[RMDB]
RNA sequence: GGGAACGACUCGAGUAGAGUCGAAAAGGUUUGACAUCACAAUGGGCCCCAGGACAGCAAAGGCAGUGGGAAAUACUGUCAAAGAUGAAGUUUUGUCUGCAUUGUUGGUGCUUUUGAGGAAAUUGUCCACAAGAUGUUGAUUCGUCAACAUCUUGUGAAAAGAAACAACAACAACAAC
Reactivity to DMS in 0.01 (KOAc 150mM, MgCl2 10mM, bicine 150mM(pH8.5), 24C), signal-to-noise 7, nucleotides 027 to 126: g010g010u010u010u010g020a130c040a040u000c040a050c040a040a060u010g000g000g010c050c010c030c060a170g000g000a050c040a050g010c070a050a110a120g010g010c010a010g010u000g010g010g000a110a080a110u010a040c000u000g000u000c010a060a090a090g010a110u010g000a080a110g020u000u000u000u000g010u010c020u010g010c040a050u000u010g000u010u010g010g010u000g010c050u000u000u010u000g000a170g010g000a040a060a110u010u010g010u010c070
Reactivity to 2A3 in 0.01 (KOAc 150mM, MgCl2 10mM, bicine 150mM(pH8.5), 24C), signal-to-noise 3, nucleotides 027 to 126: g100g010u090u110u130g050a030c020a010u020c030a030c040a090a040u060g010g010g090c000c020c000c020a000g000g040a000c000a000g010c050a080a050a010g000g000c010a000g020u080g020g070g050a080a140a050u160a050c000u030g020u030c030a030a070a040g110a060u200g050a080a060g040u020u050u170u120g020u010c000u020g000c030a030u000u080g050u130u070g010g000u030g000c040u060u110u100u110g050a050g000g070a030a120a090u200u100g050u070c030